[RMDB]
RNA sequence: GGGAACGACUCGAGUAGAGUCGAAAACUACGAUGCUUCGGCAUCGUAGAAAGAAAACUCAAGACGAAUGCGCUGAAAAACGACUUGAGACAGCGCAAAGAAAAACUUGGUUCUUCGGAACCAAGAACAGUACUCAUGACUUCGGUCAUGAGUACUGAAAAGAAACAACAACAACAAC
Reactivity to 2A3 in 0.01 (KOAc 150mM, MgCl2 10mM, bicine 150mM(pH8.5), 24C), signal-to-noise 2, nucleotides 027 to 126: c000u000a000c000g010a000u000g010c000u070u050c220g120g000c000a000u010c000g030u000a010g000a000a000a000g020a030a060a030a040c030u040c040a020a070g140a070c090g100a170a080u070g000c010g020c000u000g060a170a000a010a070a050c100g110a130c140u090u090g040a010g010a110c010a000g000c000g000c000a000a040a000g020a000a080a020a010a010c020u030u020g000g010u010u000c000u030u030c180g110g020a000a000c000c000a010a000g000a010a010
Reactivity to DMS in 0.01 (KOAc 150mM, MgCl2 10mM, bicine 150mM(pH8.5), 24C), signal-to-noise 1, nucleotides 027 to 126: c000u000a020c000g000a000u000g000c010u010u000c220g040g000c000a020u000c000g010u000a010g000a020a070a130g020a140a070a050a070c000u000c000a080a060g000a170c170g000a100a160u020g030c000g000c000u010g000a040a110a000a100a040c070g000a080c160u010u000g000a200g000a200c030a000g030c000g000c000a020a030a120g000a070a110a100a020a120c010u000u000g000g000u010u000c020u020u020c150g000g050a020a030c000c020a000a000g000a040a090

Background:
An RNA of 177 nucleotides, treated with 2A3 and DMS and read out base by base. Reactivities are given for positions 27 through 126. Source: RMDB library M2PK50, as collected in RNAgym.